[RMDB]
RNA sequence: GGGAACGACUCGAGUAGAGUCGAAAACACCGGGUGGUGGCCAGCGUUCCGUUGAGGGUGGCCGCGAUCUGCGGCUUGCCGCUGGCAUCCCGGUAGCGGGUCGCCAACCGGCGCGCCUGAAAGGUGGUCCGUAAUGACGAUUCGUCGUCAUUACGGAAAAAGAAACAACAACAACAAC
Reactivity to DMS in 0.01 (KOAc 150mM, MgCl2 10mM, bicine 150mM(pH8.5), 24C), signal-to-noise 3, nucleotides 027 to 126: c090a060c020c000g000g000g010u010g020g020u010g010g000c010c000a020g010c000g010u010u010c010c020g020u010u000g000a250g000g010g020u000g000g000c000c000g030c010g010a110u010c170u010g020c010g010g000c000u010u010g030c180c020g020c050u000g010g030c000a050u000c020c030c000g000g000u000a010g020c020g010g000g010u010c020g010c010c020a090a100c130c130g000g020c010g010c130g000c010c010u000g000a070a100a110g000g010u010g000g010
Reactivity to 2A3 in 0.01 (KOAc 150mM, MgCl2 10mM, bicine 150mM(pH8.5), 24C), signal-to-noise 3, nucleotides 027 to 126: c020a000c010c000g000g050g000u140g040g130u070g130g050c010c000a020g020c010g130u200u120c030c020g010u070u270g140a170g020g020g020u060g030g000c020c000g000c000g030a300u110c100u230g010c000g000g000c000u050u130g040c020c020g060c030u030g000g000c020a000u020c000c000c010g000g010u010a010g040c010g000g000g000u030c000g010c020c020a090a180c100c040g040g000c040g010c040g020c010c030u080g100a140a040a030g090g050u100g030g050